[RMDB]
RNA sequence: GGGAACGACUCGAGUAGAGUCGAAAAUCGUGGUGAAAGUACUAUUCAAGGUGCGUUCAUGUUUGUCGGACCAUCUGGUACUGGUAAAACCGAAAUUUCCAAAGCACUUGCUGAUGCAAUGGGUCAGGCUUACUCAUGCAUUCGUGCAUGAGUAAGCAAAAGAAACAACAACAACAAC
Reactivity to DMS in 0.01 (KOAc 150mM, MgCl2 10mM, bicine 150mM(pH8.5), 24C), signal-to-noise 4, nucleotides 027 to 126: u000c050g020u000g010g010u010g000a140a190a020g010u000a000c000u000a180u010u010c280a130a020g000g010u010g020c230g010u000u000c000a090u010g000u010u010u000g030u000c140g000g000a010c010c000a010u000c030u000g010g010u000a000c000u010g000g020u020a040a040a180a070c030c010g000a040a070a140u010u010u000c000c010a060a110a200g010c080a080c070u010u000g010c080u010g010a140u000g000c040a040a100u000g010g010g010u020c090a100g010
Reactivity to 2A3 in 0.01 (KOAc 150mM, MgCl2 10mM, bicine 150mM(pH8.5), 24C), signal-to-noise 4, nucleotides 027 to 126: u060c030g040u160g020g020u060g060a130a030a020g020u000a000c010u060a120u120u250c140a100a010g040g000u030g050c080g010u030u030c030a060u130g200u240u250u200g210u150c050g000g000a000c010c000a020u000c020u070g000g000u030a040c020u030g020g020u090a080a080a010a030c020c000g010a030a050a040u030u030u000c010c000a040a060a010g070c070a020c020u090u130g030c020u150g030a110u120g050c040a050a190u080g040g050g060u050c020a050g080